[RMDB]
RNA sequence: GGGAACGACUCGAGUAGAGUCGAAAAGAAGGUAUGAACGUUGGAAGGCGCUUCCGUGUGAGAGGAGUUGGCGGACGGAUGUGGCCGCGGAAUUCUUUCAUACCAAGAACGGGAUAACCGGAAGAAAGGGUUUAUGAUACUUCGGUAUCAUAAACCCAAAAGAAACAACAACAACAAC
Reactivity to 2A3 in 0.01 (KOAc 150mM, MgCl2 10mM, bicine 150mM(pH8.5), 24C), signal-to-noise 1, nucleotides 027 to 126: g230a000a110g020g000u010a030u050g010a050a010c040g000u090u090g100g050a170a070g000g060c010g000c050u020u050c000c000g000u110g020u160g060a090g000a010g120g000a020g050u020u090g070g000c030g070g060a000c010g020g000a040u090g120u050g080g070c000c000g000c000g040g000a050a000u060u010c000u010u000u000c000a000u000a000c010c000a060a000g050a100a040c020g000g000g000a020u150a230a050c000c000g000g070a000a000g130a040a050a130
Reactivity to DMS in 0.01 (KOAc 150mM, MgCl2 10mM, bicine 150mM(pH8.5), 24C), signal-to-noise 1, nucleotides 027 to 126: g060a070a110g010g020u030a010u010g020a130a020c060g000u000u000g000g000a130a110g030g060c080g000c010u040u000c000c000g000u030g020u000g000a000g000a070g020g000a200g120u010u010g000g010c020g000g030a030c030g000g000a030u000g000u000g040g000c000c000g000c040g000g000a120a110u000u010c000u000u000u000c040a000u000a010c000c060a060a070g000a080a120c060g000g000g000a250u020a060a110c010c010g000g000a120a170g000a080a130a070